[RMDB]
RNA sequence: GGGAACGACUCGAGUAGAGUCGAAAAAGCGCUAAAGCCCAAGUUGUAAGCGACUUGGUUUCGGCAAGUCUUUACGCUGGCAUUGCAUUUGGUAAUGCCGGAUGCGGUUGCGUGCACGCUAUGGCUAAUGCCUAAUGAUAUUCGUAUCAUUAGGCAUAAAAGAAACAACAACAACAAC
Reactivity to DMS in 0.01 (KOAc 150mM, MgCl2 10mM, bicine 150mM(pH8.5), 24C), signal-to-noise 9, nucleotides 027 to 126: a060g010c050g010c080u000a050a090a100g010c080c010c020a080a050g010u000u010g010u000a080a100g020c150g010a020c010u000u000g010g010u000u010u010c150g010g010c020a060a050g000u000c010u000u000u000a030c060g010c020u000g010g010c010a020u000u000g010c010a210u000u010u000g030g020u000a040a030u000g000c000c020g010g000a040u000g010c060g010g010u000u000g010c060g010u000g010c090a080c080g010c040u000a080u000g010g000c040u000a100
Reactivity to 2A3 in 0.01 (KOAc 150mM, MgCl2 10mM, bicine 150mM(pH8.5), 24C), signal-to-noise 7, nucleotides 027 to 126: a000g060c060g000c050u130a240a040a040g010c020c010c030a030a020g080u130u140g080u120a130a070g100c040g060a010c010u020u020g070g000u080u090u150c060g070g030c010a020a030g020u000c000u010u050u020a030c040g000c020u020g010g000c010a010u010u030g000c010a050u110u080u300g190g000u040a040a020u060g020c000c010g020g010a040u060g000c010g020g020u040u060g000c030g020u050g020c030a020c080g010c030u050a090u140g070g000c020u050a060